[RMDB]
RNA sequence: GGGAACGACUCGAGUAGAGUCGAAAAAGGAAGUACGUGCCGUAGCUGUCGUGCACUGCGAAGCCGAUCUCCGUCAGGCCCGCUGCCAGCCGGUCGCGCCGGGCCCGCAACGAGUUCCGAAGGGCCGGUGGAAGGUUCAAUUCGUUGAACCUUCCACAAAAGAAACAACAACAACAAC
Reactivity to DMS in 0.01 (KOAc 150mM, MgCl2 10mM, bicine 150mM(pH8.5), 24C), signal-to-noise 2, nucleotides 027 to 126: a110g000g020a060a110g030u000a020c150g010u000g020c020c030g010u000a120g010c100u000g030u020c050g000u010g000c060a050c030u010g010c020g000a140a100g000c030c020g000a250u020c030u000c010c020g000u000c060a060g010g020c020c010c010g020c070u000g010c030c060a160g000c020c030g000g020u000c040g000c070g000c160c040g010g000g030c010c010c030g020c130a060a060c110g000a100g000u000u000c070c020g020a140a170g020g000g000c000c020g000
Reactivity to 2A3 in 0.01 (KOAc 150mM, MgCl2 10mM, bicine 150mM(pH8.5), 24C), signal-to-noise 1, nucleotides 027 to 126: a000g080g030a040a030g040u070a070c080g000u040g010c010c010g100u060a030g010c160u110g120u240c040g180u090g100c050a020c040u010g000c020g100a060a010g050c020c000g040a070u030c020u010c010c000g050u040c010a010g020g010c020c010c000g020c050u050g010c010c010a030g030c000c000g060g000u040c020g020c000g010c050c000g040g000g000c000c000c020g000c000a000a140c020g050a000g070u070u030c010c020g000a090a010g080g040g000c000c020g000